[RMDB]
RNA sequence: GGGAACGACUCGAGUAGAGUCGAAAAUAACCGUAUUGCGGAUGGAGCGUCACGUGAGGACUGUGAAGCACAAUGCGAUAUGUUCUGAUUAUAUGGCGAGUUUGCUUAAUGACAUGUUUUUAGCCGACACUCACGACAAGUUCGCUUGUCGUGAGUGAAAAGAAACAACAACAACAAC
Reactivity to DMS in 0.01 (KOAc 150mM, MgCl2 10mM, bicine 150mM(pH8.5), 24C), signal-to-noise 2, nucleotides 027 to 126: u000a090a160c080c030g010u010a080u010u000g010c050g010g000a280u000g010g010a120g000c030g000u000c040a010c060g010u000g000a120g010g000a080c030u010g080u010g000a070a050g010c010a060c040a020a250u010g010c000g000a040u000a030u010g010u010u000c070u020g000a080u000u010a050u000a050u010g000g010c000g000a130g010u010u020u020g010c060u000u000a050a120u010g000a090c100a050u000g000u000u000u000u010u010a160g020c060c010g010a260
Reactivity to 2A3 in 0.01 (KOAc 150mM, MgCl2 10mM, bicine 150mM(pH8.5), 24C), signal-to-noise 2, nucleotides 027 to 126: u070a010a020c020c010g010u050a080u070u200g020c050g120g060a150u070g000g020a150g040c040g000u010c020a020c060g030u050g160a150g010g080a050c060u150g020u000g070a040a000g000c010a000c010a010a050u100g000c010g010a010u010a030u070g060u090u070c020u030g040a050u010u180a100u090a060u190g030g000c000g040a050g020u020u090u120g060c070u140u120a130a060u130g020a010c020a070u020g060u000u000u000u010u160a020g000c010c000g020a020
This 177-nucleotide RNA was probed chemically with DMS and 2A3.
The 2A3 profile rests on 1,153 reads.
It was measured as part of the RMDB library RFMREP.
The reactions ran in a buffer of 150 mM KOAc, 10 mM MgCl2 and 150 mM bicine (pH 8.5), at 24 C.
Reactivities are given for positions 27 through 126.